[RMDB]
RNA sequence: GGGAACGACUCGAGUAGAGUCGAAAAUGAAUGAAGCAAAUCUCCAAACGCCAACGAUGAGCGUUUCGCAAUCGCCGCUUAAGGCUUUUGCCGAGGCUGCUUGAGCCUUGUUACCAAAGAAAAGCCGAAAACCCAAAUGUCUUCGGACAUUUGGGAAGUAGACACCCAAGUUCGCUUGGGUGUCUACAAAAGAAACAACAACAACAAC
Reactivity to 2A3 in 0.01 (KOAc 150mM, MgCl2 10mM, bicine 150mM(pH8.5), 24C), signal-to-noise 1, nucleotides 027 to 156: u130g000a070a040u060g010a050a030g030c080a050a030a070u100c050u000c060c040a030a000a030c000g050c020c020a130a120c160g150a180u130g020a020g060c020g020u000u040u100c050g020c020a000a000u020c010g010c020c000g060c200u300u230a110a080g000g000c000u000u050u000u000g020c030c010g000a000g010g010c000u020g010c010u040u040g020a000g020c000c000u040u020g070u080u100a080c030c000a040a000a020g030a030a060a010a000g020c000c010g060a030a060a050a050c000c000c000a000a000a000u000g000u000c010u030u030c090g070g000a000c000a000u020u000u000g000g000g000a000a000

Conditions: 150 mM KOAc, 10 mM MgCl2 and 150 mM bicine (pH 8.5), 24 C.
This 207-nucleotide RNA was probed chemically with 2A3.
For 2A3, 745 sequencing reads were counted.
2A3 adducts were read by reverse transcription with SuperScript II with manganese.
It was measured as part of the RMDB library M2RFPK.